[RMDB]
RNA sequence: GGGAACGACUCGAGUAGAGUCGAAAAAGGUGAUUUCUCCUGCACCUUUAUCAAUGGAGGAACUCGACUUUGCUGUGAGUCCCAAAGGGACCUUAGGUGCAGACAGUUACCGGCGGUGAAGUGUGAGCAUAGGUUCGUGUCUUCGGACACGAACCAAGAUCAAAAUCAACUUCGGUUGAUUUUGAUCAAAAGAAACAACAACAACAAC
Reactivity to DMS in 0.01 (KOAc 150mM, MgCl2 10mM, bicine 150mM(pH8.5), 24C), signal-to-noise 2, nucleotides 027 to 156: a020g030g010u010g000a300u000u000u000c010u000c030c010u000g020c080a020c010c010u010u000u000a050u010c120a070a120u010g000g000a200g030g010a050a070c040u000c010g010a050c020u000u000u000g010c050u000g000u020g000a060g000u000c010c010c030a020a140a170g040g020g010a040c030c030u000u000a060g040g010u000g000c050a150g010a070c110a140g020u000u010a100c040c040g000g030c060g020g000u000g000a040a080g060u000g010u020g000a130g000c080a090u000a070g030g000u000u020c000g050u000g030u000c000u000u000c300g040g000a000c000a000c010g000a020a010c000c000a010a050
Reactivity to 2A3 in 0.01 (KOAc 150mM, MgCl2 10mM, bicine 150mM(pH8.5), 24C), signal-to-noise 6, nucleotides 027 to 156: a010g000g000u010g000a040u000u080u010c020u010c000c010u110g060c030a020c000c000u090u230u090a070u040c060a040a040u300g020g000a010g010g020a060a040c010u000c020g020a010c020u030u020u050g010c010u020g050u040g120a050g030u010c010c000c010a120a120a040g030g000g010a020c010c050u110u170a050g000g010u030g000c020a040g130a270c040a020g030u050u100a020c010c000g030g000c010g000g000u020g020a020a020g020u100g060u090g070a020g020c090a140u130a190g000g000u010u000c000g000u000g000u000c000u020u030c130g080g000a000c000a000c000g000a000a000c000c000a000a000